The record gives the reactivity of an RNA of 177 nucleotides to 2A3 and DMS. The RNA was probed in 150 mM KOAc, 10 mM MgCl2 and 150 mM bicine (pH 8.5) at 24 C. In probing experiments dimethyl sulfate is read out at A N1 and C N3, which are open when not base-paired. For 2A3, 10,540 sequencing reads were counted.

RNA sequence: GGGAACGACUCGAGUAGAGUCGAAAAAGGCGAACAACGAAGCGUGUGAAGACACACGACUCGACUGCAGGCUUGCAGCCGAUACGAGCAAGCUGUCAGAGCAAAAUCGAGAUUGCACAGCGUUCGCAAAUAUAUUAUUUUUCGAAAUAAUAUAUUUAAAAGAAACAACAACAACAAC
Reactivity to 2A3 in 0.01 (KOAc 150mM, MgCl2 10mM, bicine 150mM(pH8.5), 24C), signal-to-noise 9, nucleotides 027 to 126: a000g110g000c010g000a000a000c020a020a010c060g120a090a020g060c030g010u000g000u010g120a250a080g170a080c010a000c000a000c030g090a080c000u010c000g030a030c010u010g010c020a030g060g120c010u010u020g000c010a030g080c050c070g080a080u150a190c110g020a060g020c010a010a000g000c000u010g090u200c050a030g020a030g070c060a040a070a030a090u070c020g000a000g020a090u050u200g030c080a040c030a070g060c040g020u010u000c000g000c000
Reactivity to DMS in 0.01 (KOAc 150mM, MgCl2 10mM, bicine 150mM(pH8.5), 24C), signal-to-noise 9, nucleotides 027 to 126: a070g020g020c000g010a010a010c020a110a300c090g000a070a100g020c000g000u000g010u010g000a250a160g010a220c020a010c000a020c010g010a130c010u010c010g010a150c030u000g000c050a090g000g010c020u000u000g000c010a120g020c100c090g000a120u040a070c160g010a160g010c010a020a020g000c000u000g000u030c060a050g000a170g010c110a040a040a110a210u020c060g010a050g000a140u020u020g020c090a110c080a080g010c230g000u000u000c010g000c000